[RMDB]
RNA sequence: GGGAACGACUCGAGUAGAGUCGAAAAUCUAGUCUAUUCGUAGACUAGAAAAGACUGCUGCCGGCAGGGUUGACUGCCCCGAGCAGAAACGGCAAAGGAAAAAAACUCUUGCUUUCGAGCAAGAGAACACUUAACAAUUAUUCGUAAUUGUUAAGUGAAAAGAAACAACAACAACAAC
Reactivity to 2A3 in 0.01 (KOAc 150mM, MgCl2 10mM, bicine 150mM(pH8.5), 24C), signal-to-noise 4, nucleotides 027 to 126: u000c000u000a000g000u000c000u010a030u040u050c150g080u020a000g000a000c000u010a000g000a010a020a010a020g030a010c020u030g010c000u020g030c030c010g040g000c020a010g080g000g040u190u210g060a130c030u050g000c000c010c010c030g050a050g000c000a020g080a120a060a000c030g040g000c060a060a060a130g100g040a110a080a010a000a010a050a090c000u010c000u000u000g010c000u070u040u140c230g070a010g000c010a000a000g000a000g000a010a010
Reactivity to DMS in 0.01 (KOAc 150mM, MgCl2 10mM, bicine 150mM(pH8.5), 24C), signal-to-noise 7, nucleotides 027 to 126: u000c000u000a000g000u000c000u000a030u010u010c150g020u010a010g010a010c000u000a000g000a020a090a140a160g000a140c020u000g000c050u000g010c100c130g010g010c020a020g000g000g000u000u010g000a190c050u000g000c020c010c040c080g010a210g000c020a040g000a030a080a100c070g000g010c080a060a070a140g010g010a010a000a070a100a090a090a110c000u000c000u000u000g000c000u000u000u010c170g010a010g000c010a000a000g000a010g000a050a080